Structure probing data (DMS and 2A3) for a 177-nucleotide construct. Reactivities are rounded to 0.1 and cut off at 0 and 3. For 2A3 the reverse transcriptase was SuperScript II with manganese. It was measured as part of the RMDB library M2PK50.
RNA sequence: GGGAACGACUCGAGUAGAGUCGAAAACUAUUGUGGUUCGCCACAAUAGGCAGGGCUGUUUUUCUCGCUGACUUUCAGCCCCAAACAAAAAAGUCUGCAUAAUUGUACUGCGCUUCGGCGCAGUAAAUGAGAGAGAGUAGUUCGCUACUCUCUCUCAAAAAGAAACAACAACAACAAC
Reactivity to DMS in 0.01 (KOAc 150mM, MgCl2 10mM, bicine 150mM(pH8.5), 24C), signal-to-noise 2, nucleotides 027 to 126: c000u000a000u000u000g030u000g000g010u000u010c240g000c010c000a000c000a000a010u000a000g000g030c230a170g000g000g010c010u010g000u000u000u000u000u010c050u030c290g010c020u000g010a010c000u000u000u000c000a000g000c000c010c010c200a010a000a230c050a000a000a010a020a020a010g000u000c000u000g020c000a120u010a090a080u030u010g010u010a000c000u010g000c000g040c000u000u020c190g050g020c000g000c000a000g010u000a000a030a060
Reactivity to 2A3 in 0.01 (KOAc 150mM, MgCl2 10mM, bicine 150mM(pH8.5), 24C), signal-to-noise 1, nucleotides 027 to 126: c000u000a010u000u010g010u040g000g020u010u050c120g060c090c000a000c000a020a000u000a000g000g020c060a070g020g010g000c000u020g040u000u010u010u010u010c140u050c140g010c020u040g020a000c010u000u000u000c000a000g000c000c000c020c040a020a000a020c020a000a000a000a000a000a000g010u020c010u000g000c000a040u140a140a090u130u280g010u060a000c000u020g020c010g000c010u000u030c240g080g010c000g010c000a000g000u000a000a020a010